[RMDB]
RNA sequence: GGGAACGACUCGAGUAGAGUCGAAAAUGCGCGUGCACGACUUCGGGGACAUCGAAGAAGUCGCCGUGACCGCGCCCAGCGGCCUGCUCGCGCCGCUCGACUACCUCGCGGGGAUGGCGGUGUCGGGCAAACCUACGUUGUUCGCAACGUAGGUUUGAAAAGAAACAACAACAACAAC
Reactivity to DMS in 0.01 (KOAc 150mM, MgCl2 10mM, bicine 150mM(pH8.5), 24C), signal-to-noise 6, nucleotides 027 to 126: u010g010c040g010c050g020u010g040c050a070c040g010a230c010u000u000c010g010g010g000g010a160c290a130u010c040g010a180a090g000a020a160g010u000c030g020c060c040g010u010g010a050c010c010g000c000g020c000c010c020a290g000c010g000g010c190c040u010g000c010u000c010g010c030g000c010c090g000c000u000c060g020a110c070u000a110c030c020u000c150g010c140g000g000g010g010a140u010g000g010c020g000g000u000g000u010c010g010g000g010
Reactivity to 2A3 in 0.01 (KOAc 150mM, MgCl2 10mM, bicine 150mM(pH8.5), 24C), signal-to-noise 3, nucleotides 027 to 126: u140g000c010g000c010g060u150g000c080a010c050g010a010c010u010u000c010g000g030g010g180a090c060a220u180c110g060a050a020g010a020a010g040u010c030g000c040c010g020u020g040a040c000c000g000c000g030c030c010c000a010g030c020g000g010c000c030u050g010c010u000c010g010c000g000c010c000g000c010u110c030g090a090c030u240a300c020c010u050c060g040c100g030g030g000g010a060u050g040g000c020g000g030u010g040u130c000g010g020g000
Notes
This 177-nucleotide RNA was probed chemically with DMS and 2A3. Conditions: 150 mM KOAc, 10 mM MgCl2 and 150 mM bicine (pH 8.5), 24 C. For DMS the reverse transcriptase was MarathonRT. 2A3 adducts were read by reverse transcription with SuperScript II with manganese. The data come from the RNA Mapping Database (RMDB), library OK2TRN.